The data come from the RNA Mapping Database (RMDB), library OK3TST. Chemical mapping of a 207-nucleotide RNA with 2A3 and DMS.
RNA sequence: GGGAACGACUCGAGUAGAGUCGAAAAGAGGAUGGUUCUUUUUCCACUAGUGAUGAUAUAGAACAAAACAGGCCUGAUCCAUCAAAAGGACCACAACCCGUUCUACAGCAUGUCCCUAGGGCUGAUAGAGGCAAAAUUGAUUUAGAUGAGGGACGUGUCCCUUUCUAUGGUUCGCCAUAGAAAGGGAAAAAGAAACAACAACAACAAC
Reactivity to 2A3 in 0.01 (KOAc 150mM, MgCl2 10mM, bicine 150mM(pH8.5), 24C), signal-to-noise 3, nucleotides 027 to 156: g110a020g110g030a160u060g010g000u050u010c010u030u060u030u030u070c100c030a090c110u110a060g090u040g110a050u030g010a000u050a020u060a190g120a090a050c060a030a140a040a020c060a070g150g030c000c040u050g000a050u060c070c000a000u030c030a000a000a060a030g010g000a010c000c030a030c020a010a090c000c000c000g040u100u040c040u080a030c010a060g000c000a010u030g010u000c010c000c050u060a050g000g130g010c010u000g020a070u080a090g070a020g060g060c040a010a010a060a140u160u200g080a110u090u120u100a150g040a130u090g040a060g000g000g020a000c000g010u040g000
Reactivity to DMS in 0.01 (KOAc 150mM, MgCl2 10mM, bicine 150mM(pH8.5), 24C), signal-to-noise 3, nucleotides 027 to 156: g000a150g010g020a140u010g010g020u000u000c050u000u000u000u010u000c020c030a130c060u000a120g010u000g020a120u010g000a090u000a150u030a090g010a070a170c050a080a080a100a170c080a050g030g000c030c190u000g010a090u000c060c040a060u000c140a010a050a140a120g040g000a050c000c020a030c030a090a040c010c010c030g010u000u000c010u000a070c030a150g030c010a050u000g010u010c000c010c010u000a180g000g000g030c020u000g000a080u000a050g010a140g040g020c100a050a040a080a170u000u000g020a090u000u000u000a140g020a100u010g010a060g020g010g030a020c030g060u010g010